RNA sequence: GGGAACGACUCGAGUAGAGUCGAAAAUCCUAAGUCAAAGUGUGUUAGUCUAAGACAGUUUGAUGGAGAUCAUCGGAAACGAUGAUCUAUGAAGUCAAAUCGAGACUAACACAUCUUUGAUAUGGAAAACUCAUGUUCGCUUCGGCGAACAUGAGAAGUCUUUGUUACUGUUCGCAGUAACAAAGACAAAAGAAACAACAACAACAAC
Reactivity to DMS in 0.01 (KOAc 150mM, MgCl2 10mM, bicine 150mM(pH8.5), 24C), signal-to-noise 1, nucleotides 027 to 156: u000c010c000u000a070a280g020u010c010a030a000a010g030u000g000u000g030u000u000a000g010u000c000u000a300a180g000a160c300a000g020u000u010u000g000a010u000g000g030a050g000a000u000c010a020u000c000g000g010a200a140a210c020g030a010u010g000a000u000c000u010a070u000g010a230a300g010u000c010a000a010a010u000c070g010a060g020a030c000u010a010a030c000a000c000a010u000c010u000u000u010g010a030u030a130u000g000g000a100a130a050a080c000u020c020a020u010g000u000u000c000g010c000u000u000c300g050g020c000g020a000a020c030a010u000g010a020g020a020a110
Reactivity to 2A3 in 0.01 (KOAc 150mM, MgCl2 10mM, bicine 150mM(pH8.5), 24C), signal-to-noise 3, nucleotides 027 to 156: u020c000c000u030a090a020g030u000c000a000a000a000g000u010g000u000g000u000u000a010g000u000c010u040a180a110g080a170c090a100g040u010u000u000g010a010u020g000g050a010g000a020u000c000a000u000c000g040g020a110a110a040c020g000a000u010g000a000u000c000u000a110u010g040a020a000g000u000c000a000a000a020u110c050g040a030g010a010c000u000a000a000c010a010c000a000u000c000u000u000u000g000a000u000a050u070g030g020a040a110a030a050c000u000c010a000u000g010u000u000c000g000c030u080u060c250g120g000c000g000a000a000c000a010u000g000a000g000a000a010
Conditions: 150 mM KOAc, 10 mM MgCl2 and 150 mM bicine (pH 8.5), 24 C. The record gives the reactivity of an RNA of 207 nucleotides to DMS and 2A3. The data come from the RNA Mapping Database (RMDB), library RNAMAK.